[RMDB]
Chemical mapping of a 207-nucleotide RNA with 2A3. The RNA was probed in 150 mM KOAc, 10 mM MgCl2 and 150 mM bicine (pH 8.5) at 24 C. Values are in units of 0.01, from 0 to 300, in steps of 10.

RNA sequence: GGGAACGACUCGAGUAGAGUCGAAAAGGAGGCGUGGCUGGGCUCCUGCUUCUCUCCACCCAUCCCCACCCUCCACCCCACAGGAAGUGCCUGAACAAGAUGUGCGUCUAUGACCCCAAGAAGUUUGAGUGGAAGGAGCUGGCACCCAUGCAGACCAGCAUCCUAAUGGAUUCGUCCAUUAGGAUGCAAAAGAAACAACAACAACAAC
Reactivity to 2A3 in 0.01 (KOAc 150mM, MgCl2 10mM, bicine 150mM(pH8.5), 24C), signal-to-noise 2, nucleotides 027 to 156: g030g010a010g000g020c120g020u030g010g000c010u010g030g010g000c040u060c030c020u070g020c080u130u070c070u000c030u040c030c000a000c020c010c000a030u100c020c000c010c000a000c010c020c010u010c010c010a040c020c000c020c000a070c010a010g090g010a060a090g060u040g110c000c040u080g020a080a030c040a070a040g040a100u090g040u040g050c020g010u000c000u050a070u160g080a120c010c030c010c010a040a020g110a090a040g080u090u220u160g030a040g010u060g030g030a060a030g000g020a010g000c030u050g040g000c030a020c000c010c000a030u170g020c030a020g140a100c170c000a030